This 207-nucleotide RNA was probed chemically with 2A3 and DMS.
The RNA was probed in 150 mM KOAc, 10 mM MgCl2 and 150 mM bicine (pH 8.5) at 24 C.
For DMS the reverse transcriptase was MarathonRT.
RNA sequence: GGGAACGACUCGAGUAGAGUCGAAAACCCACCAAGUUCUUAUUAAGAGAAGCAGAGGGACUGGCCCGACGAAGCUUCAGCAACCGGUGUAAUGGCGAAAGCCAUGACCAAGGUGCUAAAUCCAGCAAGCUCGAACAGCUUGGAAGAUAAGAACAGAAAUAGCAUCCAGUUUCGACUGGAUGCUAUUAAAAGAAACAACAACAACAAC
Reactivity to 2A3 in 0.01 (KOAc 150mM, MgCl2 10mM, bicine 150mM(pH8.5), 24C), signal-to-noise 2, nucleotides 027 to 156: c020c000c000a020c040c020a110a070g010u000u030c010u010u040a050u060u090a160a050g040a000g000a080a000g020c000a000g000a000g010g000g020a010c010u010g010g030c000c010c000g060a160c010g000a060a000g000c000u000u000c010a000g000c000a010a050c000c020g020g000u090g180u300a070a080u010g010g000c000g030a070a010a000g000c010c010a000u010g020a010c010c000a040a050g020g010u010g000c000u020a010a020a040u030c010c000a020g140c010a120a000g000c020u080c120g180a160a070c050a060g000c000u000u010g020g010a010a020g020a030u000a010a000g000a000a010c020a050g080a020
Reactivity to DMS in 0.01 (KOAc 150mM, MgCl2 10mM, bicine 150mM(pH8.5), 24C), signal-to-noise 1, nucleotides 027 to 156: c010c030c000a080c080c050a150a300g000u000u000c000u000u000a010u020u000a010a170g020a300g000a050a020g000c010a100g000a220g040g030g030a120c050u010g030g020c090c000c000g000a200c030g000a130a190g000c000u000u000c000a120g030c000a050a010c000c010g000g170u010g110u000a050a020u000g000g010c000g020a110a120a300g040c000c020a000u000g020a030c000c000a030a050g030g040u000g030c000u000a050a050a150u010c030c040a030g010c000a000a030g000c040u010c000g010a150a090c190a160g000c000u000u000g030g010a050a140g000a020u000a030a050g000a030a060c010a280g020a080